[RMDB]
RNA sequence: GGGAACGACUCGAGUAGAGUCGAAAAGGAGUAAUCGAGGUAUAUCCAGACUUCAAGAUCACUCGAUCGAAAGAUCUUAUGGUCCGGAGUAAGGCGUUCUAUGCGGUUUGGGAUGAAAAACAGCAGUUGUGGUCUCAAGACGAAUUUGAUGUGCAGCCUUAUGUUGAUCCUUCGGGAUCAACAUAAGAAAAGAAACAACAACAACAAC
Reactivity to DMS in 0.01 (KOAc 150mM, MgCl2 10mM, bicine 150mM(pH8.5), 24C), signal-to-noise 2, nucleotides 027 to 156: g030g040a100g010u010a100a100u000c010g010a070g020g020u000a100u010a110u010c020c020a100g010a050c020u000u000c050a060a030g030a030u010c050a050c050u000c100g020a040u010c020g030a170a170a210g000a030u000c010u000u000a030u020g020g000u000c000c050g020g010a080g010u010a060a050g020g000c030g040u000u000c040u000a070u000g000c070g000g000u000u010u010g020g060g020a120u030g000a020a060a060a040a050c030a100g000c030a130g030u000u000g020u010g000g000u000c000u010c030a020a070g030a140c050g000a070a100u000u000u000g000a090u000g000u000g030c080a130g060c160
Reactivity to 2A3 in 0.01 (KOAc 150mM, MgCl2 10mM, bicine 150mM(pH8.5), 24C), signal-to-noise 3, nucleotides 027 to 156: g040g010a040g000u110a100a030u100c030g020a030g020g060u060a110u010a030u130c030c000a030g020a040c030u040u030c110a010a040g000a030u020c000a020c120u090c060g070a150u080c050g030a130a040a020g020a020u020c000u030u080a080u130g020g000u000c010c000g000g020a050g000u060a060a030g020g010c020g010u050u020c040u050a040u090g050c020g020g010u030u120u030g080g010g000a020u070g040a050a060a020a020a040c040a030g040c010a010g000u040u040g040u070g040g010u010c030u030c060a040a050g050a050c030g010a050a110u090u090u140g050a060u070g020u040g040c060a020g080c000

Conditions: 150 mM KOAc, 10 mM MgCl2 and 150 mM bicine (pH 8.5), 24 C.
This 207-nucleotide RNA was probed chemically with DMS and 2A3.
For DMS the reverse transcriptase was MarathonRT.
Reactivities are rounded to 0.1 and cut off at 0 and 3.
2A3 adducts were read by reverse transcription with SuperScript II with manganese.
The 2A3 profile rests on 2,195 reads.